Overview
This 177-nucleotide RNA was probed chemically with 2A3 and DMS.

RNA sequence: GGGAACGACUCGAGUAGAGUCGAAAAAGAUGAGCCAUACGUGGCUCAUCAGUGCGCUCAAUAAGGCACUGGGUUGGUCAGCUGGGGUUUCUUAGCGCAACUGGCCAUUCCAUUGCCUGGUCGAGAACAGUACCAAUUGCUUCGGCAAUUGGUACUGAAAAGAAACAACAACAACAAC
Reactivity to 2A3 in 0.01 (KOAc 150mM, MgCl2 10mM, bicine 150mM(pH8.5), 24C), signal-to-noise 4, nucleotides 027 to 126: a000g010a000u000g000a000g000c020c010a010u040a080c300g120u050g000g000c000u000c010a000u000c000a010g000u120g050c110g000c030u010c020a030a180u110a120a040g000g000c010a000c020u000g000g020g000u010u000g000g010u010c000a000g010c040u030g000g040g060g100u070u110u060c110u100u240a060g030c090g000c050a010a010c010u000g000g000c010c000a010u100u010c020c000a000u000u000g000c000c000u000g000g010u080c060g000a010g000a060a030
Reactivity to DMS in 0.01 (KOAc 150mM, MgCl2 10mM, bicine 150mM(pH8.5), 24C), signal-to-noise 3, nucleotides 027 to 126: a060g000a020u000g000a000g020c020c000a050u000a120c190g030u010g000g000c000u010c000a000u000c000a060g000u020g030c220g010c020u010c020a070a140u060a120a010g000g010c000a010c040u010g000g010g000u010u000g000g030u010c000a000g020c090u020g000g000g020g020u040u020u030c180u020u020a060g010c030g000c020a000a050c010u000g010g000c020c000a000u010u020c000c010a040u000u000g000c000c010u010g010g010u000c130g000a020g000a150a170

The RNA was probed in 150 mM KOAc, 10 mM MgCl2 and 150 mM bicine (pH 8.5) at 24 C. The 2A3 profile rests on 3,509 reads. It was measured as part of the RMDB libraries RFM100 and RFMREP.